Source information:
The record gives the reactivity of an RNA of 207 nucleotides to DMS and 2A3. For 2A3 the reverse transcriptase was SuperScript II with manganese. The DMS profile rests on 1,841 reads.
[RMDB]
RNA sequence: GGGAACGACUCGAGUAGAGUCGAAAAGUCGCAAGACCGGUAGCAAUACCGACAGAGGUCAUAUACGUCAGUUAAGCCUGUCCGGCGUCACGACGGACAGGUCGAAAAUCAAGUGAAUCGCCGUAACGGAGCGUGUUCGUCCGCGACGUCACGGUUACACUCUAUCCGAGUUCGCUCGGAUAGAGUGAAAAGAAACAACAACAACAAC
Reactivity to DMS in 0.01 (KOAc 150mM, MgCl2 10mM, bicine 150mM(pH8.5), 24C), signal-to-noise 1, nucleotides 027 to 156: g030u000c040g060c160a140a130g020a070c040c000g050g010u000a030g050c290a150a140u050a000c020c010g000a090c040a100g010a080g000g060u000c030a070u010a210u010a100c060g010u010c070a090g020u000u010a270a020g040c000c000u000g000u010c010c000g000g000c000g010u000c150a130c010g000a030c000g000g000a040c010a000g050g050u000c000g000a060a080a080a070u010c120a130a100g030u030g000a060a090u000c080g000c000c000g000u000a010a040c000g030g020a180g020c010g020u000g020u000u000c080g020u000c060c000g000c010g000a100c030g010u000c000a010c010g020g000u020u000a090
Reactivity to 2A3 in 0.01 (KOAc 150mM, MgCl2 10mM, bicine 150mM(pH8.5), 24C), signal-to-noise 5, nucleotides 027 to 156: g070u070c030g000c020a070a020g030a080c030c020g000g020u030a020g010c050a090a100u000a040c010c000g020a010c050a010g060a040g010g060u040c050a000u090a000u050a180c050g040u040c060a100g020u030u090a060a000g000c000c000u000g000u000c000c000g000g010c000g000u010c000a000c020g010a000c010g000g000a000c000a000g000g000u000c000g000a000a000a010a030u120c160a150a010g000u010g010a010a050u120c090g000c010c000g000u000a000a000c000g020g000a020g000c010g010u140g100u120u110c160g170u120c020c000g010c000g000a010c000g000u000c000a000c000g000g020u000u010a010
It was measured as part of the RMDB library ARCHII.